[RMDB]
RNA sequence: GGGAACGACUCGAGUAGAGUCGAAAAUCGGCGGCGCGGGCGGCGGCGUCGACCUCCGCCUCGGUGGCCUGGACGAAGGCGUAGGGCAGCGCUUCUCCGCUGUCGGCGUCGAGGCUGCGCAGGGUGAAUUAAUCAGGCACUUCGGUGCCUGAUUAAUAAAAGAAACAACAACAACAAC
Reactivity to DMS in 0.01 (KOAc 150mM, MgCl2 10mM, bicine 150mM(pH8.5), 24C), signal-to-noise 1, nucleotides 027 to 126: u010c040g010g020c060g010g010c020g010c100g020g020g010c070g020g020c060g000g010c060g040u000c090g000a060c040c000u000c040c020g010c010c030u000c020g000g020u000g000g010c000c010u000g010g020a070c070g020a140a080g010g000c020g020u000a100g000g000g000c030a070g000c020g000c150u000u000c110u010c110c020g010c030u000g000u010c040g000g000c030g040u000c030g000a020g010g020c030u020g000c000g030c080a130g000g030g010u000g020a150
Conditions: 150 mM KOAc, 10 mM MgCl2 and 150 mM bicine (pH 8.5), 24 C. An RNA of 177 nucleotides, treated with DMS and read out base by base. Reactivities are given for positions 27 through 126.